[RMDB]
RNA sequence: GGGAACGACUCGAGUAGAGUCGAAAAUCUGUGUGAAAUCUGUAACUAUCCAGCUUCUGCUUACCUCACUCCCGUAUUUUGAUUUUUAUUUACAUACAACUUUUCAGGAAGGUUGUGAGAGGAAAGAGCAAUGGUGCAGGAAGUGUGAGUGAUUGAGUACUGAGAAGCAAUUCGUUGCUUCUCAGUAAAAAGAAACAACAACAACAAC
Reactivity to 2A3 in 0.01 (KOAc 150mM, MgCl2 10mM, bicine 150mM(pH8.5), 24C), signal-to-noise 3, nucleotides 027 to 156: u050c010u010g010u010g020u030g130a050a070a080u070c050u050g050u080a080a070c020u040a090u070c050c050a020g040c020u090u020c020u070g040c000u040u050a050c000c010u020c010a040c030u040c000c030c000g030u030a100u000u170u020u030g080a060u050u060u030u060u210a200u070u100u160a080c020a040u190a030c020a010a100c080u110u140u050u120c000a010g010g090a040a040g030g020u020u000g010u020g000a010g000a010g010g050a070a100a060g030a000g010c000a020a040u030g060g010u030g020c030a020g030g030a040a070g030u040g020u050g070a050g010u070g040a100u090u060g020a030g080
Reactivity to DMS in 0.01 (KOAc 150mM, MgCl2 10mM, bicine 150mM(pH8.5), 24C), signal-to-noise 2, nucleotides 027 to 156: u000c040u000g020u000g010u000g050a060a090a080u000c030u000g020u000a080a080c020u000a090u010c030c050a150g000c040u000u000c020u000g020c050u000u000a100c040c030u000c030a080c050u000c020c000c030g010u010a070u000u000u000u000g010a080u000u000u000u000u000a060u030u000u010a140c060a240u000a050c020a030a080c020u000u000u000u000c110a110g040g010a080a050g020g020u000u000g020u000g000a110g000a140g010g000a050a020a050g000a070g010c020a060a070u000g020g020u010g000c050a070g020g010a050a140g070u000g020u000g010a110g000u000g030a090u020u010g000a120g020
Chemical mapping of a 207-nucleotide RNA with 2A3 and DMS. The reactions ran in a buffer of 150 mM KOAc, 10 mM MgCl2 and 150 mM bicine (pH 8.5), at 24 C. Source: RMDB library OK3TST, as collected in RNAgym. For 2A3, 1,455 sequencing reads were counted.